The data come from the RNA Mapping Database (RMDB), library TTRDEL. Chemical mapping of a 177-nucleotide RNA with 2A3 and DMS. 2A3 adducts were read by reverse transcription with SuperScript II with manganese. Reactivities are given for positions 27 through 126. For 2A3, 5,120 sequencing reads were counted. Conditions: 150 mM KOAc, 10 mM MgCl2 and 150 mM bicine (pH 8.5), 24 C.

RNA sequence: GGGAACGACUCGAGUAGAGUCGAAAAGAUAUGGAGUGUUCUGGGCGAGGGUCUUCGGAAACGAAGACCUACCCACCGAACUACCCAAUCCACUCCUAAGUCAAACGCACAGGUUCGCCUGUGCGAACUCUGUUUCUAUCUUCGGAUAGAAACAGAGAAAAGAAACAACAACAACAAC
Reactivity to 2A3 in 0.01 (KOAc 150mM, MgCl2 10mM, bicine 150mM(pH8.5), 24C), signal-to-noise 4, nucleotides 027 to 126: g010a000u160a300u200g010g000a200g050u040g000u030u050c080u060g030g030g040c300g300a220g000g000g080u000c000u000u000c000g040g000a070a040a040c020g000a010a010g000a020c010c000u010a000c010c010c010a020c070c020g010a010a020c040u110a070c070c000c010a010a020u020c040c020a050c070u020c000c010u060a120a070g160u110c130a170a090a070c010g020c000a010c000a000g020g090u060u090c240g150c070c010u010g000u000g010c010g000a000a000
Reactivity to DMS in 0.01 (KOAc 150mM, MgCl2 10mM, bicine 150mM(pH8.5), 24C), signal-to-noise 3, nucleotides 027 to 126: g000a040u010a100u000g010g000a090g020u000g000u000u000c030u000g000g000g020c160g020a150g000g010g000u000c000u000u000c000g010g000a090a050a100c000g000a000a000g000a000c000c010u000a040c030c020c020a030c300c160g010a050a040c070u010a150c030c000c020a050a040u000c060c020a060c150u000c000c010u010a030a100g000u000c140a110a100a220c030g000c000a010c020a000g010g000u000u020c200g010c010c000u000g030u000g000c000g010a030a030